RNA sequence: GGGAACGACUCGAGUAGAGUCGAAAAUGCUGUCCUAAACUGUUCUUGCUACAGUGUACAAAUGCCAUUUUAUAGGAGAACGUGAAGGUGUACAUUAUCGUUUUCAAAAUUCAGGACAUCAAUGAAAUCAGAAAAAUGCACACAUAAAAAGCACAAACUAUGAUCACUCGUUCGCGAGUGAUCAUAGAAAAGAAACAACAACAACAAC
Reactivity to 2A3 in 0.01 (KOAc 150mM, MgCl2 10mM, bicine 150mM(pH8.5), 24C), signal-to-noise 4, nucleotides 027 to 156: u060g000c020u030g010u080c000c000u040a130a080a040c040u070g010u050u070c040u080u120g140c020u020a020c010a060g030u020g010u100a090c050a110a160a070u130g050c020c010a030u060u060u060u130a130u130a060g010g040a030g010a040a010c040g020u060g100a080a030g060g010u000g020u020a020c030a010u000u060a030u040c010g000u000u000u000u060c030a090a090a080a070u130u110c040a020g100g020a050c030a090u080c060a050a020u050g030a030a010a020u090c100a140g070a030a040a020a000a000u030g000c020a010c000a000c020a040u110a090a060a010a020a000g040c040a030c110a100a040a010
Reactivity to DMS in 0.01 (KOAc 150mM, MgCl2 10mM, bicine 150mM(pH8.5), 24C), signal-to-noise 1, nucleotides 027 to 156: u000g040c000u000g030u010c050c070u000a050a060a100c080u000g010u000u000c060u000u010g080c040u000a020c030a030g030u000g040u000a220c010a160a120a110u000g030c110c030a080u020u000u000u000a080u000a050g000g000a090g000a000a020c020g030u010g010a130a140g000g040u020g060u000a000c000a010u000u000a150u010c010g010u000u010u010u000c010a040a060a100a180u000u010c020a140g050g020a120c100a090u000c030a120a260u000g000a000a020a030u010c040a120g000a030a020a160a000a000u010g030c020a040c060a010c040a120u000a020a030a010a110a110g030c020a040c040a070a010a190
The record gives the reactivity of an RNA of 207 nucleotides to 2A3 and DMS. The DMS profile rests on 1,548 reads. 2A3 adducts were read by reverse transcription with SuperScript II with manganese. The RNA was probed in 150 mM KOAc, 10 mM MgCl2 and 150 mM bicine (pH 8.5) at 24 C.